RNA sequence: GGGAACGACUCGAGUAGAGUCGAAAAGAACCGGAAGGCUUGGGAGAGCCUGAAGGUUCCGAUCGAUCCGGUGCGGGCGGCUUGGGAGAGCCUUCCUCACGGAUCCUCAAGGGGAGAACCACCGAUGGAACAGAUAACGUUUCGACGUUAUCUGUUCAAAAGAAACAACAACAACAAC
Reactivity to 2A3 in 0.01 (KOAc 150mM, MgCl2 10mM, bicine 150mM(pH8.5), 24C), signal-to-noise 7, nucleotides 027 to 126: g000a000a000c000c000g010g020a010a000g000g000c000u020u020g060g080g030a120g020a000g010c000c000u000g000a010a000g000g000u000u000c000c000g010a030u080c040g000a010u000c010c000g120g120u040g000c040g000g010g000c030g000g000c010u020u030g060g060g010a110g010a000g010c000c000u020u030c010c000u010c000a000c000g010g010a000u010c020c000u080c040a120a130g030g010g010g010a100g020a060a030c010c010a040c020c020g040a080u170g120
Reactivity to DMS in 0.01 (KOAc 150mM, MgCl2 10mM, bicine 150mM(pH8.5), 24C), signal-to-noise 5, nucleotides 027 to 126: g000a010a010c000c000g000g020a300a010g010g000c000u000u000g010g080g010a220g000a000g010c010c000u020g010a300a220g000g000u010u000c000c060g010a200u020c050g000a020u010c020c010g020g020u040g030c120g000g010g000c300g010g000c000u000u000g000g020g000a200g000a020g000c000c000u000u020c000c000u010c010a070c040g000g000a020u000c010c040u020c030a100a070g020g010g000g000a100g010a190a160c020c050a120c090c020g000a120u020g000
Structure probing data (2A3 and DMS) for a 177-nucleotide construct. Reactivities are given for positions 27 through 126. 2A3 adducts were read by reverse transcription with SuperScript II with manganese. It was measured as part of the RMDB libraries RFM100 and RFMREP.